An RNA of 177 nucleotides, treated with DMS and 2A3 and read out base by base. 2A3 adducts were read by reverse transcription with SuperScript II with manganese. DMS adducts were read by reverse transcription with MarathonRT. The DMS profile rests on 27,176 reads. Reactivities are given for positions 27 through 126. The RNA was probed in 150 mM KOAc, 10 mM MgCl2 and 150 mM bicine (pH 8.5) at 24 C.

RNA sequence: GGGAACGACUCGAGUAGAGUCGAAAAACCUCUUCGCGGGAUGAAACCAGGACCUCCCUCAGCAGUCCUGGAAUUAGGGUCAGAAGCAAAGAGAUGUGUCAACCUCAACACGUGUUGGGAAAAUCCGUACAUAUGGAACAUUCGUGUUCCAUAUGUAAAAAGAAACAACAACAACAAC
Reactivity to DMS in 0.01 (KOAc 150mM, MgCl2 10mM, bicine 150mM(pH8.5), 24C), signal-to-noise 9, nucleotides 027 to 126: a080c080c020u000c030u000u000c070g000c020g000g010g010a120u020g010a060a110a210c010c020a020g000g000a020c040c080u010c070c030c040u020c060a100g030c130a170g010u000c000c010u000g000g000a030a060u020u020a100g010g010g010u000c010a060g000a160a120g010c040a030a050a050g010a040g010a090u010g010u000g010u020c050a070a120c050c020u000c090a090a030c050a090c140g020u020g010u000u010g010g000g010a060a050a070a030u010c030c130g010
Reactivity to 2A3 in 0.01 (KOAc 150mM, MgCl2 10mM, bicine 150mM(pH8.5), 24C), signal-to-noise 8, nucleotides 027 to 126: a000c010c000u020c010u020u020c030g020c040g020g060g040a040u050g060a080a030a040c000c000a000g000g010a000c010c030u140c060c030c000u100c050a090g040c040a010g010u010c000c000u000g000g010a010a020u060u060a050g070g020g030u040c040a020g060a150a020g050c040a010a060a030g040a010g020a090u130g060u020g040u110c030a060a090c020c000u030c020a030a040c070a010c160g130u120g010u110u030g020g020g000a040a050a020a080u050c030c030g020